The record gives the reactivity of an RNA of 177 nucleotides to 2A3 and DMS. The 2A3 profile rests on 552 reads. For DMS the reverse transcriptase was MarathonRT.
RNA sequence: GGGAACGACUCGAGUAGAGUCGAAAAGGAUAUUGAUGAUAAAUUUAUUUCUAAGGUAAAAAAAGGAGAUAUUAUAGUUGCAACUAAAAACUUUGGUUGUGGUUCAUCAAGAGAACAUGCACCAAUUAUAUGGCACUAAUUUCGAUUAGUGCCAUAUAAAAGAAACAACAACAACAAC
Reactivity to 2A3 in 0.01 (KOAc 150mM, MgCl2 10mM, bicine 150mM(pH8.5), 24C), signal-to-noise 2, nucleotides 027 to 126: g110g000a120u100a020u090u020g010a020u010g030a020u090a130a150a090u030u120u040a030u030u020u030c020u020a080a180g230g000u130a000a180a000a000a010a000a050g030g010a050g030a020u020a000u080u150a090u060a090g110u090u130g020c000a050a000c000u060a060a030a020a170a080c150u060u060u050g000g000u060u000g010u050g000g050u020u000c000a000u010c010a000a050g020a010g030a220a010c050a020u130g030c040a030c020c000a010a000u070u000
Reactivity to DMS in 0.01 (KOAc 150mM, MgCl2 10mM, bicine 150mM(pH8.5), 24C), signal-to-noise 1, nucleotides 027 to 126: g000g000a090u020a070u000u000g000a050u020g000a000u000a010a110a010u030u020u000a010u020u000u000c000u060a040a170g010g040u110a010a000a080a140a060a190a240g020g010a000g020a000u000a000u020u000a110u010a080g000u040u010g000c000a050a030c020u000a020a020a010a100a020c240u040u000u000g040g000u000u000g020u000g020g040u020u000c010a000u030c010a000a050g000a130g000a130a020c050a030u000g000c120a110c030c070a030a060u000u060